[RMDB]
RNA sequence: GGGAACGACUCGAGUAGAGUCGAAAAGCCAAGCAGAAGCUAAGCUCAGCUGGUAUUUAUUUAAGUCCAUUCUCUGCUGUAGUGCAUUCUCACCCCGUUUGUAAAAUACUCGAGAAUCACCUACUUUACAGGGUUUUGCCCUCUUAUAUAAAUAAUAUGAUAACGAGAGAUUCGUCUCUCGUUAUCAAAAAGAAACAACAACAACAAC
Reactivity to 2A3 in 0.01 (KOAc 150mM, MgCl2 10mM, bicine 150mM(pH8.5), 24C), signal-to-noise 1, nucleotides 027 to 156: g040c020c000a040a000g000c000a030g020a190a030g020c020u110a160a000g000c050u020c120a020g000c000u020g030g030u030a070u010u100u000a020u010u060u040a060a010g010u000c010c010a020u100u000c020u000c000u020g040c070u020g010u040a040g020u010g000c020a020u020u000c010u050c020a090c020c010c010c010g050u000u170u090g020u090a040a120a040a020u120a090c040u040c090g000a000g060a010a010u050c060a060c010c010u050a050c010u040u040u090a070c030a000g050g000g000u050u110u170u160g060c010c040c000u080c060u090u170a070u110a000u280a300a040a040u300a050a140u300a280